[RMDB]
Chemical mapping of a 177-nucleotide RNA with DMS and 2A3.
RNA sequence: GGGAACGACUCGAGUAGAGUCGAAAAAGAAAGUAUAAGUGUCAGGAAAGAGAGCUGAAGAGAAUACGUACUGUGGAUUCUUAUUUAAUGCAUGACUGCGGAAAGACGCUUAGGGCCAGCGUCGUGCCUCGUUGAGAUUUUUCGAAAUCUCAACGAGAAAAGAAACAACAACAACAAC
Reactivity to DMS in 0.01 (KOAc 150mM, MgCl2 10mM, bicine 150mM(pH8.5), 24C), signal-to-noise 3, nucleotides 027 to 126: a080g000a080a060a060g000u000a070u000a070a080g040u010g030u010c030a050g000g010a050a060a100g000a060g010a120g020c090u010g010a080a090g010a070g000a050a040u000a050c080g000u000a080c140u000g030u010g010g000a110u000u010c020u010u020a060u010u000u000a050a070u000g010c040a030u010g000a060c070u000g040c050g000g010a090a070a120g000a030c050g010c050u000u010a080g020g000g020c040c060a080g000c060g010u010c030g020u000g000c070
Reactivity to 2A3 in 0.01 (KOAc 150mM, MgCl2 10mM, bicine 150mM(pH8.5), 24C), signal-to-noise 2, nucleotides 027 to 126: a000g070a030a040a010g080u080a060u040a230a030g040u020g040u100c020a010g020g110a100a080a000g090a020g020a010g010c030u040g020a070a030g080a030g060a070a020u060a040c000g030u010a080c080u110g040u060g100g030a020u030u060c010u020u080a170u190u150u100a130a080u120g030c010a000u060g040a060c050u160g010c010g030g040a140a140a020g030a020c000g000c010u010u060a080g010g060g000c030c010a010g010c030g000u020c010g020u020g000c010
The reactions ran in a buffer of 150 mM KOAc, 10 mM MgCl2 and 150 mM bicine (pH 8.5), at 24 C. DMS adducts were read by reverse transcription with MarathonRT.